The data come from the RNA Mapping Database (RMDB), library M2PK50. An RNA of 177 nucleotides, treated with DMS and read out base by base. Reactivities are rounded to 0.1 and cut off at 0 and 3.
RNA sequence: GGGAACGACUCGAGUAGAGUCGAAAAGGGACGUCCUUCGGGACGUCCCAAAGAAAACGCGUGCCAAAGCCGGCCAAAGAAGGCACGCCAAAGGCCGGCAAAAAACUUCGAACUUCGGUUCGAAGAACAAUAAUCAUUCGUUCGCGAAUGAUUAUUGAAAAGAAACAACAACAACAAC
Reactivity to DMS in 0.01 (KOAc 150mM, MgCl2 10mM, bicine 150mM(pH8.5), 24C), signal-to-noise 1, nucleotides 027 to 126: g010g000g000a010c000g010u010c010c000u000u030c120g020g040g060a010c000g000u010c000c000c000a000a010a060g000a090a120a130a040c080g000c000g010u000g030c010c000a080a070a170g000c000c010g000g010c000c020a070a120a120g020a180a130g000g010c000a000c020g020c030c010a040a130a130g000g010c000c000g000g030c000a000a030a030a040a050a040c010u000u000c010g000a010a000c000u000u000c140g010g000u000u000c000g000a000a010g000a110a170